Chemical mapping of a 177-nucleotide RNA with 2A3 and DMS. The DMS profile rests on 1,755 reads. For 2A3 the reverse transcriptase was SuperScript II with manganese. For 2A3, 1,444 sequencing reads were counted.

RNA sequence: GGGAACGACUCGAGUAGAGUCGAAAAAAGUUGCACGAGGUACGGAUACCAGACGUUGCCAAACAGGGUGACAUGAGGAUCACCCAUGUACUGUCCCUUGGCAGCCGUACCUGGUGCUGGUGAAAAACUCCUAAACGCUAUUCGUAGCGUUUAGGAGAAAAGAAACAACAACAACAAC
Reactivity to 2A3 in 0.01 (KOAc 150mM, MgCl2 10mM, bicine 150mM(pH8.5), 24C), signal-to-noise 1, nucleotides 027 to 126: a020a000g190u090u050g000c010a000c030g090a000g000g010u000a000c020g030g000a030u020a150c040c000a030g050a040c090g030u070u030g040c030c000a040a120a000c000a050g000g030g010u010g020a000c030a070u240g130a110g110g030a050u040c020a070c020c030c000a020u030g010u020a040c050u100g030u000c020c010c010u000u010g000g000c000a010g050c040c000g000u030a000c040c010u000g000g010u020g000c000u010g020g020u110g060a120a050a000a020a030
Reactivity to DMS in 0.01 (KOAc 150mM, MgCl2 10mM, bicine 150mM(pH8.5), 24C), signal-to-noise 2, nucleotides 027 to 126: a090a080g010u000u000g030c010a020c000g000a020g000g010u020a010c000g000g010a150u000a120c090c060a090g030a060c160g010u000u010g020c050c020a010a070a050c060a040g000g000g000u000g010a010c030a140u010g020a140g020g000a240u000c010a020c000c000c010a040u010g010u000a030c130u030g010u010c010c040c010u000u000g010g000c030a120g010c010c000g010u000a020c020c000u010g010g030u000g000c020u000g000g000u000g000a060a090a090a070a080